RNA sequence: GGGAACGACUCGAGUAGAGUCGAAAAAUCACCGGUGGGGAACCCCAUACGGCAACGGCGUAGAAGUAAAUGCUAACCAAUCCGUGGUAUCUACGCGACGCAGCAUCCACGGAUAACUCUAACAAGGCUAAGCGUCUCGGUUUCGACCGAGACGCAACCACUGGAAUGGAUUCGUCCAUUCCAGUGGAAAAGAAACAACAACAACAAC
Reactivity to 2A3 in 0.01 (KOAc 150mM, MgCl2 10mM, bicine 150mM(pH8.5), 24C), signal-to-noise 1, nucleotides 027 to 156: a000u060c010a000c020c010g000g010u020g010g030g030g070a100a160c110c000c020c000a000u100a160c020g010g010c090a050a030c020g000g020c010g000u010a030g000a050a000g040u050a020a060a000u110g020c090u090a070a060c020c020a110a040u000c000c010g000u000g000g000u020a010u030c010u010a020c000g020c030g040a050c040g000c030a000g000c020a010u000c000c010a000c010g000g000a000u020a020a020c050u020c040u130a110a060c180a190a000g130g030c060u150a230a030g000c000g000u000c000u000c020g050g000u060u090u170c260g040a040c000c000g010a000g000a000c000g030c000a000a030

The record gives the reactivity of an RNA of 207 nucleotides to 2A3. The RNA was probed in 150 mM KOAc, 10 mM MgCl2 and 150 mM bicine (pH 8.5) at 24 C. 2A3 adducts were read by reverse transcription with SuperScript II with manganese.